Chemical mapping of a 177-nucleotide RNA with 2A3 and DMS. The data come from the RNA Mapping Database (RMDB), library M2PK50. For 2A3, 2,669 sequencing reads were counted. For DMS, 1,181 sequencing reads were counted. 2A3 adducts were read by reverse transcription with SuperScript II with manganese. The RNA was probed in 150 mM KOAc, 10 mM MgCl2 and 150 mM bicine (pH 8.5) at 24 C.
[RMDB]
RNA sequence: GGGAACGACUCGAGUAGAGUCGAAAAACCUCUAAGUUCGCUUAGAGGUAAUGAACGCUGCAAAAAGCAGCGCGCUCAGCGCAGCACGCAAAAGCAACGCAAGAACACCAUUCUUCGGAAUGGUGAAGUCACCUAAGGAGUUCGCUCCUUAGGUGACAAAAGAAACAACAACAACAAC
Reactivity to 2A3 in 0.01 (KOAc 150mM, MgCl2 10mM, bicine 150mM(pH8.5), 24C), signal-to-noise 2, nucleotides 027 to 126: a000c000c000u000c000u030a020a010g000u030u120c120g030c130u000u000a000g000a010g010g000u000a000a000u090g020a060a040c030g000c010u010g000c010a090a020a040a160a250g000c010a000g000c010g040c030g010c000u070c050a060g040c020g000c080a020g050c020a020c070g040c030a000a000a040a100g000c030a040a050c070g010c050a060a070g060a160a010c020a010c010c000a000u010u000c010u030u100c220g060g010a000a000u010g000g000u000g000a020a020
Reactivity to DMS in 0.01 (KOAc 150mM, MgCl2 10mM, bicine 150mM(pH8.5), 24C), signal-to-noise 2, nucleotides 027 to 126: a020c000c000u000c000u020a030a000g000u000u000c190g040c030u010u000a000g010a060g000g000u000a010a030u000g020a080a140c020g040c010u000g010c000a070a050a030a180a130g000c010a100g010c000g010c070g000c000u010c050a060g010c060g020c030a040g010c040a080c120g000c100a040a030a050a090g000c020a040a010c070g010c250a110a110g000a190a230c000a010c000c000a000u000u000c010u000u020c200g000g000a020a000u000g000g000u000g000a000a030